Notes:
This 177-nucleotide RNA was probed chemically with 2A3 and DMS. In probing experiments dimethyl sulfate is read out at A N1 and C N3, which are open when not base-paired. For DMS the reverse transcriptase was MarathonRT.
RNA sequence: GGGAACGACUCGAGUAGAGUCGAAAAUGCGACAUCUGUCACCCCAUUGAUCGCCAGGGUUGAUUCGGCUGAUCUGGCUGGCUAGGCGGGUGUCCCCUUCCUCCCUCACCGCUCCAUGUGCGUCCCUGAGUUUAUACCCAUUCGUGGGUAUAAACUCAAAAGAAACAACAACAACAAC
Reactivity to 2A3 in 0.01 (KOAc 150mM, MgCl2 10mM, bicine 150mM(pH8.5), 24C), signal-to-noise 6, nucleotides 027 to 126: u160g000c050g010a010c010a020u030c030u040g010u030c020a190c010c000c000c020a040u050u220g030a030u020c010g010c000c020a130g060g040g150u140u120g140a180u170u150c060g050g000c080u140g010a030u010c020u010g030g010c080u060g020g000c060u080a080g010g010c000g000g000g010u020g000u010c020c000c000c000u020u050c000c010u000c010c000c000u020c010a030c000c030g010c010u010c010c020a050u070g030u050g050c020g040u000c000c000c000u000
Reactivity to DMS in 0.01 (KOAc 150mM, MgCl2 10mM, bicine 150mM(pH8.5), 24C), signal-to-noise 2, nucleotides 027 to 126: u010g000c150g010a000c010a030u020c040u000g020u010c020a200c020c010c000c000a080u020u020g000a020u000c060g000c000c010a110g000g010g040u000u030g010a150u010u000c120g000g010c020u000g000a070u000c010u020g010g010c080u020g010g020c080u000a090g000g000c010g020g020g040u000g000u010c000c020c060c040u000u020c010c010u000c020c050c000u000c030a090c040c030g020c070u000c020c030a060u010g020u000g010c040g000u010c000c020c020u010